Description
An RNA of 177 nucleotides, treated with 2A3 and DMS and read out base by base. Values are in units of 0.01, from 0 to 300, in steps of 10. For 2A3 the reverse transcriptase was SuperScript II with manganese. The RNA was probed in 150 mM KOAc, 10 mM MgCl2 and 150 mM bicine (pH 8.5) at 24 C.
RNA sequence: GGGAACGACUCGAGUAGAGUCGAAAAUGGAUUUAGAGGCGUUGGCGCUAAAGCGGCUAACGAAAGAUUGCAGCUCAGAGAUCUGGGCCUUUUUCUUAGCAUUAUCAGAGAGCAAACGAUCGCGAGCCCUCUACUAAGUUUUCGAACUUAGUAGAGGAAAAGAAACAACAACAACAAC
Reactivity to 2A3 in 0.01 (KOAc 150mM, MgCl2 10mM, bicine 150mM(pH8.5), 24C), signal-to-noise 3, nucleotides 027 to 126: u060g030g030a020u030u120u170a150g010a030g070g000c030g030u050u050g040g000c020g000c060u110a150a030a020g080c090g080g000c030u010a000a010c080g010a020a000a010g080a010u090u230g030c100a050g000c020u010c010a010g030a020g020a190u130c030u020g010g010g000c010c000u060u110u020u030u020c010u010u050a010g010c020a060u080u050a040u220c030a030g060a010g000a000g110c020a070a070a040c040g040a040u080c020g030c020g050a020g040c010
Reactivity to DMS in 0.01 (KOAc 150mM, MgCl2 10mM, bicine 150mM(pH8.5), 24C), signal-to-noise 6, nucleotides 027 to 126: u020g010g010a090u000u010u010a090g010a120g010g020c040g020u000u000g010g020c030g020c050u000a050a090a150g040c180g010g020c000u000a010a020c180g020a030a050a050g000a060u010u000g020c170a130g000c010u000c020a020g010a300g010a110u010c020u000g010g000g010c030c020u000u000u000u000u000c010u010u010a030g000c040a060u000u000a080u010c140a110g010a070g000a070g030c020a030a040a080c060g000a080u010c060g000c100g000a140g000c170